[RMDB]
RNA sequence: GGGAACGACUCGAGUAGAGUCGAAAAGACGUUGACCUUCGCGCCCGGCGACAACGUGCGCACGUACGGCACCCCGUCGUGGGUGUGCCCGGCAAGGUAGGUCAUGCCGUCGACAUCGGUACCGCACUCCAACUCGGACUUUCGAGUCCGAGUUGGAAAAAGAAACAACAACAACAAC
Reactivity to 2A3 in 0.01 (KOAc 150mM, MgCl2 10mM, bicine 150mM(pH8.5), 24C), signal-to-noise 1, nucleotides 027 to 126: g040a000c000g020u000u010g040a030c000c000u080u000c020g030c010g050c100c020c000g000g000c040g020a100c130a190a030c050g000u020g010c030g020c020a240c160g050u050a010c000g010g030c020a040c010c000c010c070g270u270c110g000u300g000g050g000u010g000u000g000c000c000c000g000g000c020a050a070g170g100u090a040g010g000u000c010a000u130g110c030c020g010u010c000g010a030c000a120u080c040g100g020u070a030c020c020g020c080a030c070
Reactivity to DMS in 0.01 (KOAc 150mM, MgCl2 10mM, bicine 150mM(pH8.5), 24C), signal-to-noise 1, nucleotides 027 to 126: g050a000c020g020u000u020g000a030c000c020u010u000c090g030c300g000c010c010c160g000g000c080g010a080c130a060a110c050g020u000g030c010g000c140a060c180g000u000a030c110g010g020c000a030c020c000c000c010g030u000c260g000u000g030g030g010u010g010u020g010c000c010c160g000g010c010a080a140g000g010u000a020g000g000u000c040a020u010g010c190c020g030u000c000g000a070c130a020u000c040g020g020u020a140c060c010g010c100a060c100